[RMDB]
Source: RMDB library M2RFPK, as collected in RNAgym. Chemical mapping of a 207-nucleotide RNA with 2A3. The RNA was probed in 150 mM KOAc, 10 mM MgCl2 and 150 mM bicine (pH 8.5) at 24 C. For 2A3 the reverse transcriptase was SuperScript II with manganese.

RNA sequence: GGGAACGACUCGAGUAGAGUCGAAAAGCCGAUGAAUUGCCGAGAAGCCUGGCUCGAAAUCGUCGACGCAUCGACGACGGUCCUGCCAUGAGACCGUAGCGAGGACAUGUCGCCUCGAAUGGCGUCGUAUAACAUGAGUGGUUCGCCACUCAUGUAAGAUCAGGCACAUCUUCGGAUGUGCCUGAUCAAAAGAAACAACAACAACAAC
Reactivity to 2A3 in 0.01 (KOAc 150mM, MgCl2 10mM, bicine 150mM(pH8.5), 24C), signal-to-noise 1, nucleotides 027 to 156: g000c010c010g020a000u090g050a040a180u190u140g010c060c040g020a040g040a120a000g080c000c070u060g110g000c020u030c080g070a100a100a000u040c050g060u010c010g000a000c000g030c050a070u020c020g010a000c000g010a030c020g000g000u000c020c000u120g030c010c010a140u150g020a030g000a090c040c050g010u020a010g000c010g030a040g000g000a020c150a140u120g010u040c070g000c050c060u020c010g060a100a070u050g060g070c000g010u050c000g000u120a120u010a190a000c000a000u000g000a010g000u010g000g030u010u040c080g020c020c000a000c000u010c000a000u000g010u010a010a010